[RMDB]
RNA sequence: GGGAACGACUCGAGUAGAGUCGAAAACCAUUACGCGAAUGCCUGUGCUUUUCGACGUUUAGUUUAGUCUGCAAGAUAGAAUUGAUGUCUCGAAGACAGGUACAUCAGCUUUUAGAGUUCCUGUUCAGUUAACGACUAUAUUCGUAUAGUCGUUAACAAAAGAAACAACAACAACAAC
Reactivity to DMS in 0.01 (KOAc 150mM, MgCl2 10mM, bicine 150mM(pH8.5), 24C), signal-to-noise 9, nucleotides 027 to 126: c030c010a120u020u010a070c200g010c020g010a110a100u000g000c000c010u010g000u010g010c030u000u000u000u010c130g010a020c020g010u000u000u010a020g020u000u000u010a270g010u000c000u010g020c220a110a090g010a030u010a300g010a030a040u000u000g010a020u000g000u000c010u000c130g000a030a040g000a040c030a010g000g010u000a020c130a030u010c060a150g000c040u010u000u010u010a100g010a160g000u000u000c010c010u000g020u010u010c150a130
Reactivity to 2A3 in 0.01 (KOAc 150mM, MgCl2 10mM, bicine 150mM(pH8.5), 24C), signal-to-noise 9, nucleotides 027 to 126: c010c000a030u070u140a080c120g000c010g020a050a010u040g000c000c010u060g030u300g190c010u060u020u010u040c020g010a020c020g040u010u020u080a020g010u000u020u030a070g020u020c030u080g240c140a130a080g010a040u100a060g070a040a020u030u030g010a010u010g020u000c010u000c070g020a020a010g020a020c010a010g000g000u000a000c000a020u030c030a010g020c000u050u070u030u140a120g020a030g030u020u020c010c010u040g060u090u090c050a020